Chemical mapping of a 207-nucleotide RNA with 2A3 and DMS. Conditions: 150 mM KOAc, 10 mM MgCl2 and 150 mM bicine (pH 8.5), 24 C. High DMS reactivity at an A or C suggests that its Watson-Crick edge is free. 2A3 adducts were read by reverse transcription with SuperScript II with manganese. For DMS, 3,684 sequencing reads were counted.
RNA sequence: GGGAACGACUCGAGUAGAGUCGAAAACUGGCAUCAGCUAGAGGGAUAAACCGGUGGGUCCGGUCGCGGGACUCAUCGGGACAUCAAACAGCGACUGGGAUCGUCAUCCUGACUUGUUCGCGUGAUCAGGAGAUCCGAGUAGAGACAUAGCGAACUGGAAUAGUAAUUCGUUCGCGAAUUACUAUUCAAAAGAAACAACAACAACAAC
Reactivity to 2A3 in 0.01 (KOAc 150mM, MgCl2 10mM, bicine 150mM(pH8.5), 24C), signal-to-noise 6, nucleotides 027 to 156: c020u020g030g000c030a110u070c080a170g030c040u080a040g020a080g080g080g030a090u110a130a150a030c000c000g010g000u000g000g010g000u000c000c000g010g000u000c000g000c000g000g000g010a000c010u010c010a000u010c000g010g000g010a000c010a040u160c090a080a000a010c000a010g000c000g000a000c000u000g010g000g000a000u000c000g000u000c000a000u000c000c000u000g000a000c000u160u270g000u000u000c000g000c000g000u000g010a060u000c000a000g000g000a000g000a000u000c000c000g000a000g000u300a000g010a000g000a000c040a080u160a010g000c000g000a000a000c010u010g070
Reactivity to DMS in 0.01 (KOAc 150mM, MgCl2 10mM, bicine 150mM(pH8.5), 24C), signal-to-noise 2, nucleotides 027 to 156: c020u010g020g020c040a180u000c070a080g070c000u000a110g010a100g000g020g010a100u000a050a090a040c010c010g040g010u000g040g010g050u000c020c000g000g000u000c000g030c010g030g000g020a030c010u000c040a010u000c000g010g000g000a060c120a110u010c080a130a190a300c000a050g000c030g000a050c020u000g010g000g010a040u010c020g010u000c020a120u010c000c000u000g000a020c000u010u000g000u000u000c010g020c000g050u010g000a130u000c010a060g000g000a110g000a010u000c030c000g010a250g040u000a030g000a100g010a060c010a120u000a040g010c020g000a030a030c030u010g010